Conditions: 150 mM KOAc, 10 mM MgCl2 and 150 mM bicine (pH 8.5), 24 C. Chemical mapping of a 177-nucleotide RNA with 2A3 and DMS. The 2A3 profile rests on 4,513 reads.
RNA sequence: GGGAACGACUCGAGUAGAGUCGAAAAGAUAUGGAAGAGUAAGUCCGAGGAUCUAUAGGGAGUCGGAAACGACGAACUAUAGGGAGGAUAUCUCUUCCUAAGUCAAAGGCGGAGUUCGCUCCGCCAACCUUCUAAUUUCCUUCGGGAAAUUAGAAGGAAAAGAAACAACAACAACAAC
Reactivity to 2A3 in 0.01 (KOAc 150mM, MgCl2 10mM, bicine 150mM(pH8.5), 24C), signal-to-noise 3, nucleotides 027 to 126: g020a000u090a020u160g000g000a000a000g020a040g050u130a300a100g040u070c000c000g020a260g000g010a000u000c010u000a010u000a000g000g020g010a040g020u020c000g010g040a050a030a030c010g020a000c000g000a010a030c010u000a000u000a010g000g010g000a020g000g010a000u020a080u040c010u000c000u000u000c000c000u010a040a010g050u010c070a110a070a120g000g000c010g020g010a030g000u120u150c210g090c130u030c000c000g000c000c010a000a000
Reactivity to DMS in 0.01 (KOAc 150mM, MgCl2 10mM, bicine 150mM(pH8.5), 24C), signal-to-noise 3, nucleotides 027 to 126: g000a010u000a300u010g000g010a030a000g000a010g020u000a110a300g030u000c000c010g000a090g000g000a050u000c010u000a000u010a030g000g010g030a300g000u000c010g000g010a080a050a140c000g030a010c010g010a300a190c000u010a000u000a000g000g000g010a020g020g010a020u000a300u020c010u000c000u000u010c000c000u010a020a070g010u000c080a080a060a130g020g030c010g010g000a020g020u000u000c300g010c000u000c010c000g010c010c020a000a010

The data come from the RNA Mapping Database (RMDB), library TTRDEL. Reactivities are given for positions 27 through 126.